Chemical mapping of a 177-nucleotide RNA with DMS and 2A3.
Values cover nucleotides 27 to 126.

RNA sequence: GGGAACGACUCGAGUAGAGUCGAAAAUGUACCUGGUUGAGAGGCUCAUUGCUUGUGAAAAUCCAUUCAUGGUUAACCAAUUGGCUUAUAGCUCUAGUGCAAAUGGCAGCCUGGUUGGCACAACUUUCGUUUAAAGUUAGUUCGCUAACUUUAAACGAAAAGAAACAACAACAACAAC
Reactivity to DMS in 0.01 (KOAc 150mM, MgCl2 10mM, bicine 150mM(pH8.5), 24C), signal-to-noise 1, nucleotides 027 to 126: u020g010u000a150c020c040u010g000g030u000u000g000a120g000a090g000g020c110u000c040a110u000u000g010c080u010u030g000u010g000a040a060a090a110u000c030c040a070u000u000c110a100u000g010g040u000u000a080a150c040c010a070a080u000u040g000g010c070u000u000a100u010a110g010c020u000c180u000a070g010u000g030c060a020a060a060u000g020g030c060a040g010c040c000u010g020g010u000u000g000g000c100a050c050a030a090c080u000u000u000
Reactivity to 2A3 in 0.01 (KOAc 150mM, MgCl2 10mM, bicine 150mM(pH8.5), 24C), signal-to-noise 2, nucleotides 027 to 126: u100g010u010a040c010c000u040g080g000u080u190g050a080g000a010g070g040c030u030c040a040u060u010g040c010u150u100g000u030g120a070a030a030a050u000c000c000a050u030u070c030a070u070g000g000u080u110a030a020c010c010a060a080u060u000g000g000c020u070u050a100u100a180g020c000u010c010u050a040g060u080g030c010a050a060a130u060g050g000c010a000g030c010c010u020g080g010u020u030g010g000c020a000c000a090a080c020u000u010u000
For DMS, 981 sequencing reads were counted. Values are in units of 0.01, from 0 to 300, in steps of 10.